Structure probing data (2A3) for a 207-nucleotide construct. It was measured as part of the RMDB library OK3TST. Conditions: 150 mM KOAc, 10 mM MgCl2 and 150 mM bicine (pH 8.5), 24 C. The 2A3 profile rests on 458 reads.
RNA sequence: GGGAACGACUCGAGUAGAGUCGAAAACAACAAAGUGAAGAAGGGUAGAGGGCACUUUGAAGAGGAGAUGAAAAAUCAAGACUCAAGAAGUUGUCUCCUAACCAUUAGCAAUAAUAGCUUCGGACACCAGUAGAAGUUCUAAGUCAAGUCUGGUUUAGACUAAUGCUCGAUUCGUCGAGCAUUAGUCAAAAGAAACAACAACAACAAC
Reactivity to 2A3 in 0.01 (KOAc 150mM, MgCl2 10mM, bicine 150mM(pH8.5), 24C), signal-to-noise 1, nucleotides 027 to 156: c010a010a010c000a040a160a070g050u040g080a070a070g090a130a060g040g010g010u020a020g040a050g040g030g000c010a000c030u000u060u040g030a270a100g000a010g010g070a130g000a090u110g090a240a120a060a030a030u080c070a060a070g040a140c000u010c060a000a080g040a010a030g060u130u060g020u040c050u010c040c010u060a060a060c010c010a000u020u040a020g000c060a000a010u070a120a010u030a060g000c010u020u050c020g000g080a050c030a010c060c000a010g000u020a010g040a060a040g130u240u180c030u000a090a060g030u090c090a060a140g030u010c000u030g080g000u080u110u180a010